[RMDB]
RNA sequence: GGGAACGACUCGAGUAGAGUCGAAAAUAGUGAGCGAGACGAGGAUAAUGGUUAAGCUUUUGGGCAAUACGCGUUGGAGAAAACGCUCAAACGGGGCGAGGAUAGCGACACUUACGAGUAUGGGAAGCGUUCUCGAAAUGUUCGCAUUUCGAGAACGAAAAGAAACAACAACAACAAC
Reactivity to 2A3 in 0.01 (KOAc 150mM, MgCl2 10mM, bicine 150mM(pH8.5), 24C), signal-to-noise 1, nucleotides 027 to 126: u090a000g110u040g030a040g040c020g000a030g050a100c040g000a050g080g010a050u010a100a050u080g100g040u010u090a010a030g000c000u050u090u070u100g030g020g000c030a040a030u100a160c070g040c040g030u020u030g020g000a080g060a110a150a010a000c010g000c000u010c000a090a100a000c030g050g030g060g000c050g030a050g040g000a060u010a120g060c030g020a010c000a000c000u030u010a040c040g040a010g050u090a060u100g020g000g030a060a000g070
Reactivity to DMS in 0.01 (KOAc 150mM, MgCl2 10mM, bicine 150mM(pH8.5), 24C), signal-to-noise 2, nucleotides 027 to 126: u000a120g020u010g030a070g000c030g000a150g000a080c090g000a130g000g000a090u010a070a070u020g010g010u000u010a030a120g000c030u000u000u000u000g020g000g000c010a050a080u020a100c150g010c020g050u020u010g030g000a120g090a090a070a060a070c100g000c010u010c080a050a050a080c210g000g030g000g000c030g010a070g010g010a080u000a120g000c020g000a030c020a050c050u000u000a050c130g000a050g000u010a050u010g010g000g000a150a120g000